Conditions: 150 mM KOAc, 10 mM MgCl2 and 150 mM bicine (pH 8.5), 24 C. Structure probing data (DMS) for a 177-nucleotide construct. DMS (dimethyl sulfate) methylates the pairing face of unpaired adenines and cytosines. Reactivities are rounded to 0.1 and cut off at 0 and 3. Values cover nucleotides 27 to 126.

[RMDB]
RNA sequence: GGGAACGACUCGAGUAGAGUCGAAAAUGGAUGAACCAGAUGAACUUACAGUACAUGUUAAAAGUGAUGAUCCAGAUGUGGUUGCAGCUAGCUCAAGUCUCAUGGCAAGGAAGCUUGAAUUUGGAACGACAAAGACGACUUUCGAGUCGUCUUUGUCAAAAGAAACAACAACAACAAC
Reactivity to DMS in 0.01 (KOAc 150mM, MgCl2 10mM, bicine 150mM(pH8.5), 24C), signal-to-noise 2, nucleotides 027 to 126: u010g020g000a130u000g010a240a100c040c030a070g010a080u000g000a070a050c040u000u000a080c100a100g020u020a070c010a060u000g010u000u000a080a020a050a110g010u000g000a100u000g000a070u000c010c030a090g010a070u000g000u000g000g000u000u000g020c070a060g000c130u010a020g020c070u020c100a040a080g000u000c000u000c110a080u010g010g000c100a070a080g000g030a060a030g030c060u000u000g030a060a080u000u010u010g030g000a050a120c220